[RMDB]
RNA sequence: GGGAACGACUCGAGUAGAGUCGAAAACGACUGUGAAUACACUCAGUGAACGUAUCUCGUCUAAAUUAGAACAAGAAGCGAACGCUAGUGCUCAAACAAAAUGUGAUAUAGAAAUCGGAAAUUUUUAUAUCCGACAAAACCAUGGAUGUAACAUCACAGCAAAUACUCGUUUCGACGAGUAUUUGCUAAAAGAAACAACAACAACAAC
Reactivity to 2A3 in 0.01 (KOAc 150mM, MgCl2 10mM, bicine 150mM(pH8.5), 24C), signal-to-noise 1, nucleotides 027 to 156: c080g040a020c060u060g030u040g100a100a000u150a060c000a050c030u020c180a020g010u050g120a060a020c000g000u050a230u050c000u020c000g020u000c030u050a090a280a300u290u250a150g110a100a000c010a020a040g050a020a000g000c020g000a020a000c000g000c020u000a000g030u000g000c060u110c080a060a060a120c020a000a120a000a030u060g040u060g050a000u000a000u020a050g020a020a030a030u000c020g010g010a000a290a190u110u220u000u070u050a060u050a020u000c020c020g020a030c060a020a120a000a020c060c000a030u080g020g020a050u050g120u050a000a200c030a080u030c000a000c000